[RMDB]
RNA sequence: GGGAACGACUCGAGUAGAGUCGAAAAUACGGAUUACUGCUGUAUCUCAGUCGUGGUGUCUGGCUAUAUACCUAUCCGGAAUGGUUCGAACAUGGGCCAAUGCUGUUCUCCUUCACCGCAGCCGAUGAGGUUGACAGUCUUUCGAGACUGUCAACCUAAAAGAAACAACAACAACAAC
Reactivity to DMS in 0.01 (KOAc 150mM, MgCl2 10mM, bicine 150mM(pH8.5), 24C), signal-to-noise 1, nucleotides 027 to 126: u010a070c060g000g000a130u000u000a080c120u000g010c100u000g020u000a000u000c020u000c050a070g010u000c080g020u000g020g010u000g000u000c060u000g040g000c060u000a100u020a040u000a050c030c040u000a070u010c060c030g010g020a070a140u000g010g000u000u000c030g000a050a160c230a080u020g010g000g000c050c010a090a160u000g020c090u000g000u000u000c060u000c070c040u000u020c080a030c030c050g000c060a100g050c040c010g000a050u000g000
Reactivity to 2A3 in 0.01 (KOAc 150mM, MgCl2 10mM, bicine 150mM(pH8.5), 24C), signal-to-noise 1, nucleotides 027 to 126: u060a000c000g000g030a010u060u060a130c060u100g060c000u010g010u140a110u070c040u000c020a090g040u050c020g080u040g110g010u040g040u090c010u000g040g000c050u040a030u040a020u030a180c020c020u030a050u090c030c000g000g060a040a050u030g020g010u050u060c010g070a170a060c120a130u140g020g000g010c020c050a030a070u070g030c030u010g010u040u000c090u030c010c000u000u070c020a020c040c040g050c050a000g010c000c020g020a060u140g090